[RMDB]
Source information: This 177-nucleotide RNA was probed chemically with 2A3 and DMS. In probing experiments dimethyl sulfate is read out at A N1 and C N3, which are open when not base-paired.
RNA sequence: GGGAACGACUCGAGUAGAGUCGAAAAGGAUCGCCGAGGUACUUGGUGUGGACGCGGCCAGCUUGUUCGGCUAGCCGCCGAACGUGCACGCACUGCGAAGAUUCGGCCAAUUGUUCGCAGCUGUUGCCGCGUCUAGUACCUUCGGGUACUAGACGCGAAAAGAAACAACAACAACAAC
Reactivity to 2A3 in 0.01 (KOAc 150mM, MgCl2 10mM, bicine 150mM(pH8.5), 24C), signal-to-noise 1, nucleotides 027 to 126: g080g020a080u100c050g000c060c040g000a090g030g030u070a050c030u050u140g190g010u050g100u100g020g050a030c030g040c000g040g000c010c000a020g030c030u070u260g020u040u110c000g000g000c010u030a080g080c090c080g000c000c000g040a020a010c010g030u030g060c070a020c070g030c000a020c020u030g000c000g050a020a010g030a090u060u120c090g120g000c010c040a050a070u150u150g150u140u000c000g050c010a040g030c100u000g040u130u070g000c000
Reactivity to DMS in 0.01 (KOAc 150mM, MgCl2 10mM, bicine 150mM(pH8.5), 24C), signal-to-noise 2, nucleotides 027 to 126: g010g000a070u000c070g000c030c020g020a090g010g000u000a020c020u010u000g030g050u030g010u010g000g000a070c090g000c010g010g030c000c300a080g010c040u000u010g020u000u000c050g000g000c000u000a170g000c210c180g010c010c000g000a010a020c020g000u000g070c010a160c220g010c110a070c010u010g000c000g000a020a070g000a060u010u000c040g000g000c090c050a090a030u000u000g000u010u010c020g020c010a050g020c160u000g000u000u010g010c000